[RMDB]
RNA sequence: GGGAACGACUCGAGUAGAGUCGAAAAGAAAGGGGAGCCGGGUGGGUGCUGGCCCUGCUUCCGUGGGUUUCAGCUCUCGUUGGUGCUGGUGCUCGCGUGGGCCACGUCACCCUCCCUUCACCCUUAAUUCCCAUCACUUGUUCGCAAGUGAUGGGAAAAAAGAAACAACAACAACAAC
Reactivity to DMS in 0.01 (KOAc 150mM, MgCl2 10mM, bicine 150mM(pH8.5), 24C), signal-to-noise 1, nucleotides 027 to 126: g000a090a060a010g020g000g000g070a100g020c220c300g000g000g020u000g000g000g030u000g010c000u000g000g040c000c010c010u000g000c050u070u060c300c000g030u030g000g000g030u010u020u000c000a010g000c000u000c000u020c300g040u060u060g030g000u000g010c000u000g000g000u040g020c010u010c000g000c000g000u010g010g000g010c000c010a000c180g010u080c000a000c000c000c010u010c000c030c010u010u010c140a120c020c000c020u000u000a060a020
Reactivity to 2A3 in 0.01 (KOAc 150mM, MgCl2 10mM, bicine 150mM(pH8.5), 24C), signal-to-noise 4, nucleotides 027 to 126: g060a010a030a020g000g000g000g010a030g110c090c040g020g050g020u050g040g000g000u020g010c010u000g000g010c000c000c010u090g040c090u210u060c090c000g000u010g000g010g000u000u010u030c010a000g000c000u000c040u030c160g300u220u300g070g020u080g020c000u000g000g000u010g000c000u010c020g000c020g040u070g010g000g010c010c000a000c060g120u160c020a000c010c020c000u010c000c000c000u030u050c030a090c000c000c000u000u010a020a020